[RMDB]
RNA sequence: GGGAACGACUCGAGUAGAGUCGAAAAAAAAUACUCAAUCUGGAGGAUUAUCUGAUGCUCCAGAUGACGAAUUAGGAGAAGAUUCAGCCACUUUAGAUAUUGAUCCUGAUGAUGAAGCUGAGUAUGAAGUGAAUAUACAGUUCGCUGUAUAUUCACUAAAAGAAACAACAACAACAAC
Reactivity to 2A3 in 0.01 (KOAc 150mM, MgCl2 10mM, bicine 150mM(pH8.5), 24C), signal-to-noise 5, nucleotides 027 to 126: a000a000a000a000u020a000c010u000c000a020a030u000c000u000g010g000a020g040g010a020u030u060a110u280c170u300g040a020u050g090c000u000c000c000a000g000a010u010g010a010c020g010a040a050u040u020a040g030g040a050g030a160a000g020a050u050u030c030a040g090c060c020a140c080u190u120u130a060g020a070u130a070u150u160g030a020u030c000c020u020g020a020u010g010a030u070g040a060a020g020c050u020g010a000g020u020a030u060g080a060
Reactivity to DMS in 0.01 (KOAc 150mM, MgCl2 10mM, bicine 150mM(pH8.5), 24C), signal-to-noise 8, nucleotides 027 to 126: a050a050a090a030u000a000c020u000c010a080a040u010c000u000g000g000a020g000g000a040u000u000a080u010c260u010g010a020u000g000c000u000c000c000a030g000a000u000g010a120c130g000a100a030u000u000a030g000g010a030g000a140a080g000a070u000u010c040a100g020c120c090a070c140u000u000u000a080g000a060u010a050u000u000g000a230u000c020c000u000g010a030u000g010a160u000g010a080a070g020c220u000g000a020g010u000a010u000g010a120